RNA sequence: GGGAACGACUCGAGUAGAGUCGAAAAAUGCUCAAGGAAGAUGAGGACGACAGUGGUUUCCAUUGGAGACUCAACUGCUUGAAUGGAAGCACGCGUCCGCUGCGUGGUGGUGACUUCGGCAUCGUUGCUGCCCGUCCUGACAAGGGCAAGACCACGUGUAUACUGAACUAUUCGUAGUUCAGUAUACAAAAGAAACAACAACAACAAC
Reactivity to DMS in 0.01 (KOAc 150mM, MgCl2 10mM, bicine 150mM(pH8.5), 24C), signal-to-noise 4, nucleotides 027 to 156: a090u000g020c010u000c020a060a130g010g010a090a100g010a150u000g000a040g000g030a040c010g020a060c060a100g030u010g000g010u010u010u000c010c010a090u000u010g030g010a060g010a060c020u000c040a080a070c040u010g000c020u000u000g010a060a040u000g030g010a040a030g010c020a040c010g010c020g010u000c010c020g010c020u010g000c030g000u000g020g030u000g010g040u000g000a050c040u000u000c070g020g010c130a120u000c300g020u010u000g020c020u010g020c010c010c020g010u000c050c020u010g010a170c090a090a120g010g000g020c010a090a070g000a210c020c010a060c220g020u010
Reactivity to 2A3 in 0.01 (KOAc 150mM, MgCl2 10mM, bicine 150mM(pH8.5), 24C), signal-to-noise 9, nucleotides 027 to 156: a000u090g010c020u020c040a020a030g070g010a030a080g060a150u160g080a100g050g010a010c010g040a040c100a120g040u130g060g050u040u010u010c010c000a010u010u030g110g010a020g030a070c040u050c280a110a100c120u200g020c010u020u080g170a000a000u000g010g000a000a000g020c000a000c010g010c000g000u000c000c000g010c000u030g000c030g060u170g010g000u010g010g000u030g020a030c020u080u050c180g100g020c060a070u110c110g040u030u050g010c000u010g000c000c000c010g040u050c000c020u070g030a080c070a100a120g000g000g000c020a010a020g040a010c010c010a040c040g020u030

This 207-nucleotide RNA was probed chemically with DMS and 2A3. DMS (dimethyl sulfate) methylates the pairing face of unpaired adenines and cytosines. For DMS, 14,468 sequencing reads were counted. The RNA was probed in 150 mM KOAc, 10 mM MgCl2 and 150 mM bicine (pH 8.5) at 24 C. For 2A3 the reverse transcriptase was SuperScript II with manganese. It was measured as part of the RMDB library OK3TST.